[RMDB]
RNA sequence: GGGAACGACUCGAGUAGAGUCGAAAAGAUAUGGAAAUGGGGACCGAUAAGCAGUUAUCGGAAACGAUAAUACUGCUUUUGACGGCCUAUUUCCUAAGUCAAAGCUUCAAGCUUCGGCUUGAAGCAACAACCACUACAUGUUCGCAUGUAGUGGUUGAAAAGAAACAACAACAACAAC
Reactivity to 2A3 in 0.01 (KOAc 150mM, MgCl2 10mM, bicine 150mM(pH8.5), 24C), signal-to-noise 3, nucleotides 027 to 126: g010a000u020a020u090g000g000a000a010a020u000g010g000g040g090a120c010c020g060a170u070a210a000g000c000a010g000u020u000a010u000c000g000g000a030a010a010c020g010a010u000a040a080u090a130c000u000g020c000u010u010u040u150g180a020c010g010g000c000c000u000a000u000u000u000c000c000u000a040a010g020u010c050a160a080a080g000c000u000u000c000a010a010g000c000u050u180c300g130g010c000u000u020g010a010a000g000c000a000a010
Reactivity to DMS in 0.01 (KOAc 150mM, MgCl2 10mM, bicine 150mM(pH8.5), 24C), signal-to-noise 3, nucleotides 027 to 126: g000a030u000a280u000g000g010a020a010a010u000g010g000g010g000a130c010c000g020a160u000a030a020g010c000a010g000u000u000a000u000c010g010g000a050a050a120c000g020a010u000a010a110u000a060c020u000g000c000u000u000u000u000g020a160c100g010g000c000c000u000a010u000u000u000c000c010u010a010a070g000u000c020a120a120a160g010c010u000u000c000a020a000g010c000u000u010c240g030g010c000u010u000g010a010a010g010c010a060a080
This 177-nucleotide RNA was probed chemically with 2A3 and DMS. Source: RMDB library TTRDEL, as collected in RNAgym. For DMS, 6,532 sequencing reads were counted. For DMS the reverse transcriptase was MarathonRT. The RNA was probed in 150 mM KOAc, 10 mM MgCl2 and 150 mM bicine (pH 8.5) at 24 C.